This 177-nucleotide RNA was probed chemically with 2A3 and DMS. For 2A3 the reverse transcriptase was SuperScript II with manganese. It was measured as part of the RMDB library OK2TST. High 2A3 reactivity points to a flexible backbone, as in loops and unpaired stretches. For 2A3, 11,824 sequencing reads were counted.
RNA sequence: GGGAACGACUCGAGUAGAGUCGAAAAUCUUGUCGAGGAACGGCACAUUCCGGUGCUGAUGAACGGGAUGGCGCGCGGCGUGGUGCCCGCCGAUCACCGGUUGGCCUUCUCACGGGCGCGGUCAAAACGUUAGGAUUAUGUUCGCAUAAUCCUAACGAAAAGAAACAACAACAACAAC
Reactivity to 2A3 in 0.01 (KOAc 150mM, MgCl2 10mM, bicine 150mM(pH8.5), 24C), signal-to-noise 6, nucleotides 027 to 126: u030c020u020u070g060u060c040g040a080g060g110a180a110c040g020g010c020a020c020a100u140u070c050c040g060g040u090g050c090u110g070a200u140g050a050a020c010g000g000g040a050u060g060g000c020g000c010g000c020g120g120c010g020u010g010g030u050g010c000c000c000g000c000c000g040a100u190c100a030c150c020g000g000u000u020g010g000c000c020u110u050c080u040c010a010c000g020g020g000c010g010c020g000g030u080c030a040a030a030a060
Reactivity to DMS in 0.01 (KOAc 150mM, MgCl2 10mM, bicine 150mM(pH8.5), 24C), signal-to-noise 8, nucleotides 027 to 126: u000c030u000u010g020u010c040g010a160g010g020a080a110c080g010g010c010a080c030a090u000u000c060c060g010g010u000g020c080u000g020a120u010g020a130a080c030g000g010g000a070u000g010g010c030g020c030g020c030g010g000c050g030u000g010g010u000g000c020c000c070g010c010c010g000a170u010c200a130c210c010g000g010u000u000g010g000c010c190u000u000c060u000c030a050c060g010g000g000c020g010c020g010g010u010c090a060a070a110a190